[RMDB]
RNA sequence: GGGAACGACUCGAGUAGAGUCGAAAAAAACGUUGGUGAGCGCACUUUCCGGGCCUUCAUCAGCAGACACAUCACACCCUUGCUACCACCCAUGGGCCCUGAGCCAACUACAAGGUUGCAACAGCGUAAUAUGCCGGAUAUUCGUAUCCGGCAUAUUAAAAGAAACAACAACAACAAC
Reactivity to DMS in 0.01 (KOAc 150mM, MgCl2 10mM, bicine 150mM(pH8.5), 24C), signal-to-noise 3, nucleotides 027 to 126: a070a030a040c090g000u000u000g000g040u000g020a090g040c070g020c050a070c050u000u020u000c100c080g010g020g000c030c030u000u030c030a030u010c070a030g000c060a090g010a160c050a070c120a070u000c040a100c070a060c030c030c010u000u000g000c030u000a030c060c030a070c040c040c030a080u010g010g010g040c040c000c000u030g000a110g000c070c020a040a060c070u000a120c250a100a060g000g020u020u000g010c060a060a120c080a050g000c160g000u000
Reactivity to 2A3 in 0.01 (KOAc 150mM, MgCl2 10mM, bicine 150mM(pH8.5), 24C), signal-to-noise 3, nucleotides 027 to 126: a000a000a020c070g020u030u030g010g030u030g010a040g010c050g000c010a040c150u040u070u020c040c000g000g040g030c010c010u100u110c000a070u010c010a000g000c010a000g060a030c040a000c010a100u100c010a000c010a050c020c000c000u030u090g010c010u070a060c000c050a030c010c040c010a090u080g040g000g000c040c020c010u010g010a010g010c000c000a010a060c010u070a040c070a080a060g080g000u020u000g010c020a080a070c000a090g060c020g010u000
Chemical mapping of a 177-nucleotide RNA with DMS and 2A3. Conditions: 150 mM KOAc, 10 mM MgCl2 and 150 mM bicine (pH 8.5), 24 C. High DMS reactivity at an A or C suggests that its Watson-Crick edge is free. 2A3 is a SHAPE reagent: it acylates the 2'-hydroxyl of flexible nucleotides of all four kinds. For DMS the reverse transcriptase was MarathonRT. The 2A3 profile rests on 2,786 reads.